[RMDB]
Chemical mapping of a 177-nucleotide RNA with 2A3 and DMS. Reactivities are rounded to 0.1 and cut off at 0 and 3. Values cover nucleotides 27 to 126.
RNA sequence: GGGAACGACUCGAGUAGAGUCGAAAAGGUGGCGCAGGUGUCCUUGGCACAUACAGCCGUGGUGAUGGUACUUUAAGUGGAGGCUGAAUCAUUUCCCCUUUGAGCUGCAUGGCACAUGGCUCCCUUGACUCAGACUAUCCUUCGGGAUAGUCUGAGUAAAAGAAACAACAACAACAAC
Reactivity to 2A3 in 0.01 (KOAc 150mM, MgCl2 10mM, bicine 150mM(pH8.5), 24C), signal-to-noise 3, nucleotides 027 to 126: g100g040u010g030g000c020g020c050a020g050g000u030g050u140c050c070u060u120g000g030c050a070c030a080u230a060c020a050g000c030c020g030u060g020g030u070g000a120u060g010g020u150a140c040u020u030u150a100a070g010u070g070g020a010g050g000c010u020g050a010a040u080c060a110u050u000u030c000c020c000c000u050u090u100g060a090g010c010u040g000c020a090u040g050g000c030a000c030a090u040g030g000c000u010c030c000c000u000u100g010
Reactivity to DMS in 0.01 (KOAc 150mM, MgCl2 10mM, bicine 150mM(pH8.5), 24C), signal-to-noise 2, nucleotides 027 to 126: g000g000u000g010g020c050g020c050a110g010g010u000g000u030c010c070u000u000g000g030c060a070c090a050u020a140c170a080g010c000c040g020u010g000g000u020g010a070u000g010g050u000a080c070u010u000u020a100a040g000u010g010g010a120g000g000c120u000g000a070a060u010c080a100u000u000u000c030c000c030c170u000u030u020g000a060g000c030u000g010c090a050u020g000g000c030a020c090a070u010g000g020c040u000c020c010c010u000u020g010